[RMDB]
RNA sequence: GGGAACGACUCGAGUAGAGUCGAAAAGCUGGACCUGAGUUGGUGUUUUAUGGAACGUUCUGCCCCGUAUGUUCUGAGUCGCCUUCUUGCAAGUCCUUAUCUGGUGGAAAUUCGAUGGGUUACAGCCAACUUGUGUGAGAUUCGUCUCACACAAGUUAAAAGAAACAACAACAACAAC
Reactivity to 2A3 in 0.01 (KOAc 150mM, MgCl2 10mM, bicine 150mM(pH8.5), 24C), signal-to-noise 7, nucleotides 027 to 126: g040c030u050g010g040a050c000c020u050g030a040g050u030u020g030g020u040g020u040u040u020u090a240u150g040g010a020a020c020g020u040u030c030u100g040c000c000c000c010g050u080a040u090g020u020u000c020u050g040a030g050u040c010g020c010c000u020u060c010u010u050g030c050a100a060g030u020c010c000u020u050a120u050c060u070g010g010u030g030g070a070a090a100u100u090c040g040a090u150g020g010g020u040u040a090c020a010g020c020c010
Reactivity to DMS in 0.01 (KOAc 150mM, MgCl2 10mM, bicine 150mM(pH8.5), 24C), signal-to-noise 4, nucleotides 027 to 126: g010c060u010g000g000a080c040c020u000g000a130g000u010u020g010g010u010g010u010u000u010u010a090u030g010g010a050a060c060g000u000u010c030u010g010c030c020c010c080g000u010a030u020g000u000u000c010u010g010a090g000u000c030g000c030c020u010u020c050u000u020g010c080a070a120g000u000c020c010u000u010a050u030c030u020g000g000u020g000g010a060a060a090u010u010c070g010a060u010g000g000g010u000u010a090c080a110g010c070c120
Chemical mapping of a 177-nucleotide RNA with 2A3 and DMS. For 2A3, 8,258 sequencing reads were counted. Source: RMDB library OK1LIB, as collected in RNAgym. The RNA was probed in 150 mM KOAc, 10 mM MgCl2 and 150 mM bicine (pH 8.5) at 24 C.